This 177-nucleotide RNA was probed chemically with 2A3 and DMS.
RNA sequence: GGGAACGACUCGAGUAGAGUCGAAAAUUUGGACAGAAGCUCUGAGGGAAGAGCAGCGUUCAAACGGCUAACUGCAUUCUCCGAAUGCUCUAUCUCCCUAUUCUUCUCGAGCCAUGCGAGGAUAGACCCAUCGAUCGUAUUUCGAUACGAUCGAUGGAAAAGAAACAACAACAACAAC
Reactivity to 2A3 in 0.01 (KOAc 150mM, MgCl2 10mM, bicine 150mM(pH8.5), 24C), signal-to-noise 3, nucleotides 027 to 126: u000u000u000g020g000a010c000a010g300a170a000g030c000u000c020u070g090a140g100g160g110a090a030g000a020g020c000a010g000c010g030u010u010c000a040a020a010c040g000g010c040u070a080a060c060u110g000c000a040u050u020c150u020c040c070g040a040a020u040g000c020u040c010u030a110u020c050u020c020c000c000u000a110u100u010c030u040u000c010u010c010g040a020g020c020c020a030u130g040c020g020a020g030g000a040u060a110g050a030c030
Reactivity to DMS in 0.01 (KOAc 150mM, MgCl2 10mM, bicine 150mM(pH8.5), 24C), signal-to-noise 2, nucleotides 027 to 126: u000u020u000g000g030a060c000a060g050a300a140g020c060u000c020u000g000a120g020g040g000a150a030g010a030g000c000a020g000c300g010u010u010c030a000a010a060c190g000g030c090u030a020a150c100u000g000c000a010u000u000c030u000c100c160g010a040a010u020g020c020u020c040u000a120u000c050u000c000c070c020u000a070u010u000c050u000u000c000u000c050g010a100g010c010c060a060u020g000c020g000a050g020g020a080u000a060g010a130c270

For DMS the reverse transcriptase was MarathonRT. The RNA was probed in 150 mM KOAc, 10 mM MgCl2 and 150 mM bicine (pH 8.5) at 24 C.